[RMDB]
Background:
This 207-nucleotide RNA was probed chemically with 2A3 and DMS. The RNA was probed in 150 mM KOAc, 10 mM MgCl2 and 150 mM bicine (pH 8.5) at 24 C. The data come from the RNA Mapping Database (RMDB), library RNAMAK.
RNA sequence: GGGAACGACUCGAGUAGAGUCGAAAAGCGGCUUCGGCCGCACGUAUGGGGUCCUAGAAAUCAACGACGAUCGUGGAACUACAGCUGAAGCCUCCACGGCUGCCACGGGAGUUGAACUUCUAGGACGGAGGCACCCCCGGCAGGUUUUCGAACCUAAGUUAACUUCAUUGUUCGCAAUGAAGUUAACAAAAGAAACAACAACAACAAC
Reactivity to 2A3 in 0.01 (KOAc 150mM, MgCl2 10mM, bicine 150mM(pH8.5), 24C), signal-to-noise 3, nucleotides 027 to 156: g000c000g030g000c010u080u160c300g140g000c010c000g010c020a000c010g110u140a210u170g000g000g000g000u020c000c000u000a000g000a010a010a000u000c000a000a000c020g280a060c020g000a010u010c000g010u010g010g050a130a040c080u210a120c300a000g000c000u010g010a010a000g000c000c000u000c010c000a020c000g010g000c010u000g010c000c000a000c000g010g000g000a030g000u000u000g000a010a050c030u010u010c000u000a000g000g030a010c010g000g000a000g000g000c000a020c000c030c010c010c000g080g110c090a040g000g060u040u070u090u230c130g090a020a020c000c020u070a110a060
Reactivity to DMS in 0.01 (KOAc 150mM, MgCl2 10mM, bicine 150mM(pH8.5), 24C), signal-to-noise 1, nucleotides 027 to 156: g020c000g010g030c030u000u000c300g030g040c000c000g040c010a010c040g010u010a070u010g010g010g070g040u010c010c000u000a020g030a030a010a070u000c030a040a060c010g020a090c160g030a080u000c000g050u000g030g010a150a120c130u000a300c040a020g010c010u010g040a040a030g000c000c000u000c000c000a300c010g000g000c000u000g020c010c020a040c030g010g000g060a080g040u000u000g010a060a110c060u000u000c010u000a030g000g000a020c050g010g020a010g000g030c010a070c000c000c000c000c050g000g070c100a090g010g010u000u000u010u020c160g000a130a180c040c020u000a040a300